[RMDB]
RNA sequence: GGGAACGACUCGAGUAGAGUCGAAAAUCUAUGAGCGUUACUGAAAUAUCGUGCGUAGAGGAUGUCCCUUUAGAUCAGAAGUUUAAGUAUAUAACUUACACUCAGGGGGAGAAACGGGACUUGAGUAGCCGUGUAAAACAUUCGUGUUUUACACGGCAAAAGAAACAACAACAACAAC
Reactivity to 2A3 in 0.01 (KOAc 150mM, MgCl2 10mM, bicine 150mM(pH8.5), 24C), signal-to-noise 1, nucleotides 027 to 126: u000c000u050a030u020g010a010g020c020g030u080u110a040c040u240g140a070a090a080u140a030u040c040g000u020g030c060g020u010a010g010a020g000g020a050u070g020u100c000c010c010u030u110u040a150g010a070u120c050a050g130a300a020g040u040u030u040a030a000g000u000a060u010a020u050a300a100c010u020u010a020c020a000c050u030c040a040g120g000g070g000g000a070g010a000a140a020c050g040g000g040a010c000u020u040g090a080g000u060a020
Reactivity to DMS in 0.01 (KOAc 150mM, MgCl2 10mM, bicine 150mM(pH8.5), 24C), signal-to-noise 2, nucleotides 027 to 126: u010c000u000a020u010g000a170g020c010g010u000u000a060c090u060g010a060a180a250u000a010u010c050g000u000g000c030g020u000a040g010a100g010g020a270u010g000u000c010c000c000u000u030u010a070g010a100u010c140a060g010a130a010g000u000u000u000a020a060g010u000a110u000a080u010a090a070c000u000u000a040c030a040c050u000c070a150g000g020g000g000g010a060g030a020a030a060c180g010g000g000a090c070u000u000g030a130g040u000a120